[RMDB]
RNA sequence: GGGAACGACUCGAGUAGAGUCGAAAAUAAGUUGGUGACGCCGAGUGGAGUAAAGACGGAGAGUCUCCGCUAGUCGGAAAGACUCCGCAUCCUCCGGCAGACCCUCCUUGCUCGCCGCUAGUCGCGCGGACUUCAGGAGAGUAGCCCCAAUCCUAAUACAAUAUGUAAGGUUCGCCUUACAUAUUGUAAAAGAAACAACAACAACAAC
Reactivity to 2A3 in 0.01 (KOAc 150mM, MgCl2 10mM, bicine 150mM(pH8.5), 24C), signal-to-noise 4, nucleotides 027 to 156: u190a050a020g050u040u040g000g010u020g040a080c130g000c010c010g050a070g010u010g000g020a010g020u110a080a070a040g070a060c020g000g000a030g000a020g090u010c010u010c010c000g010c040u090a130g160u300c000g000g000a100a060a000g010a000c000u000c000c000g020c000a030u000c000c000u000c010c000g000g000c010a000g040a010c000c010c000u010c000c000u010u040g020c020u020c050g050c050c030g020c090u080a060g140u290c060g020c040g000c080g210g000a080c020u110u080c110a030g000g020a030g010a010g040u050a030g010c000c010c000c010a000a070u050c020c030u070a090a120u050
Reactivity to DMS in 0.01 (KOAc 150mM, MgCl2 10mM, bicine 150mM(pH8.5), 24C), signal-to-noise 2, nucleotides 027 to 156: u000a060a180g030u000u000g020g000u020g020a240c060g000c010c010g020a190g000u000g040g050a100g070u000a090a160a210g000a150c040g000g010a090g020a230g020u000c040u000c000c000g050c030u000a090g020u000c000g040g010a040a070a150g010a150c010u010c020c040g000c020a260u000c040c000u010c020c000g000g010c040a120g120a080c140c020c010u000c030c010u000u000g010c020u000c000g000c020c030g050c030u000a110g030u000c070g040c190g130c140g020g000a020c010u000u000c090a070g000g000a040g010a030g010u010a140g000c030c000c010c030a070a300u000c040c020u010a050a300u000